RNA sequence: GGGAACGACUCGAGUAGAGUCGAAAAUGCAAGUGAGUAUGCAGACAUGAGUAACGUUAAGCCGGGUGAAAUCCCCGGCCGCCGUAAACCCGAGGUUUCCAGGGCAACGUGUUUCGUCCCUGGGUUACUGUCUGGCUUGGUUCGCCAAGCCAGACAGAAAAGAAACAACAACAACAAC
Reactivity to 2A3 in 0.01 (KOAc 150mM, MgCl2 10mM, bicine 150mM(pH8.5), 24C), signal-to-noise 1, nucleotides 027 to 126: u020g000c000a020a000g130u170g130a060g000u100a210u100g050c080a000g070a000c000a000u150g000a000g160u110a140a110c000g120u300u160a030a030g000c000c000g000g010g000u000g000a000a000a000u000c090c000c000c000g000g000c000c000g000c000c000g030u250a300a300a070c000c000c000g000a000g000g120u060u040u000c000c000a000g000g000g010c110a000a000c000g060u000g060u020u160u000c210g250u300c050c000c000u000g000g050g120u130u000a000
This 177-nucleotide RNA was probed chemically with 2A3. The RNA was probed in 150 mM KOAc, 10 mM MgCl2 and 150 mM bicine (pH 8.5) at 24 C. For 2A3, 331 sequencing reads were counted. Source: RMDB library RFM100, as collected in RNAgym.